[RMDB]
RNA sequence: GGGAACGACUCGAGUAGAGUCGAAAAUAUGGGAAGCCCUUCUCAGUUUCCCGCUGACGCAACUAAUAUGACAUCAAUCGACCAUGGCGGCUUCACAAAUGUUGACAUUACAUCAACUGAGAACAAAAUCCGAGGAUCACUUCGGUGAUCCUCGGAUAAAAGAAACAACAACAACAAC
Reactivity to 2A3 in 0.01 (KOAc 150mM, MgCl2 10mM, bicine 150mM(pH8.5), 24C), signal-to-noise 2, nucleotides 027 to 126: u170a090u000g030g000g000a080a000g000c000c000c000u060u000c040u000c000a020g010u040u100u070c000c010c010g000c090u050g040a010c020g000c080a110a000c140u260a120a210u070a080u300g100a230c050a120u080c100a090a080u110c070g050a000c040c010a000u080g100g000c000g000g000c050u020u020c030a060c000a000a130a020u130g000u000u000g110a000c030a300u000u220a130c050a030u040c000a050a000c060u140g000a000g100a070a010c000a060a140a000
Source: RMDB library OK1LIB, as collected in RNAgym. An RNA of 177 nucleotides, treated with 2A3 and read out base by base. The reactions ran in a buffer of 150 mM KOAc, 10 mM MgCl2 and 150 mM bicine (pH 8.5), at 24 C.